[RMDB]
RNA sequence: GGGAACGACUCGAGUAGAGUCGAAAAUUUCUAUCACUAUGUAUUACUACUGAAGAAUAAUCAUAGAAGCACAGUAGUUUCUGAAAAUGGAGAGUCAGUAAUCUUGGCCCAGGUUUUGCAACUUGCUCUAAAGCAGAGUCCUCAAAGAAAAGGAAGCCAUUUGCAUAUGUUUCGACAUAUGCAAAUGAAAAGAAACAACAACAACAAC
Reactivity to DMS in 0.01 (KOAc 150mM, MgCl2 10mM, bicine 150mM(pH8.5), 24C), signal-to-noise 2, nucleotides 027 to 156: u010u000u010c030u010a120u000c040a230c010u000a040u000g010u000a090u000u000a050c010u000a300c070u000g010a110a150g000a040a090u000a100a090u020c020a070u020a050g010a070a120g050c070a060c040a080g030u000a130g010u000u000u010c050u000g010a050a070a090a070u010g000g010a080g000a110g050u000c040a080g010u000a070a070u000c070u000u000g020g040c000c010c030a090g020g020u000u000u020u000g020c030a040a050c090u010u000g010c000u000c070u010a050a070a110g020c010a040g000a160g010u010c020c010u000c040a080a010a130g000a080a080a080a120g010g000a140a100g020c150
Reactivity to 2A3 in 0.01 (KOAc 150mM, MgCl2 10mM, bicine 150mM(pH8.5), 24C), signal-to-noise 2, nucleotides 027 to 156: u030u040u000c030u060a160u110c010a000c070u060a030u170g040u050a070u170u040a030c010u020a030c040u090g050a140a050g020a120a110u150a110a060u110c030a030u090a150g080a150a010g070c010a000c020a100g020u030a000g020u020u050u000c040u050g020a090a070a030a010u070g040g000a050g000a000g100u080c050a000g010u050a040a050u020c040u020u020g010g000c000c000c020a060g100g000u010u020u140u100g030c020a020a020c020u010u050g010c000u000c000u080a070a090a010g000c040a010g020a010g100u010c010c010u070c050a110a120a040g070a030a080a010a000g030g010a010a030g030c020